Overview:
The record gives the reactivity of an RNA of 177 nucleotides to DMS. Reactivities are given for positions 27 through 126. For DMS the reverse transcriptase was MarathonRT.

RNA sequence: GGGAACGACUCGAGUAGAGUCGAAAAACUGGAAGCUCUUUGAGGCAGGAGGGAAGGAGGACGCAGCACGUGCGUUGGAGGCAUUCGUGAAGAAGUGGGCGGCGAAGGCUCCCCGGAUGACGGCCUCCACCGGGUGGAGUUUCGACUCCACCCGGUGAAAAGAAACAACAACAACAAC
Reactivity to DMS in 0.01 (KOAc 150mM, MgCl2 10mM, bicine 150mM(pH8.5), 24C), signal-to-noise 1, nucleotides 027 to 126: a120c110u000g020g040a160a080g030c050u000c010u000u020u000g010a100g010g020c080a060g040g010a060g020g000g000a080a080g000g000a080g000g050a090c080g000c070a110g050c090a050c130g000u010g010c050g020u000u000g030g010a030g010g010c000a050u010u010c020g040u000g010a050a030g010a060a080g010u020g010g000g010c110g000g020c020g040a100a090g010g000c040u010c080c000c040c000g000g010a100u000g000a040c040g020g000c040c010u000c010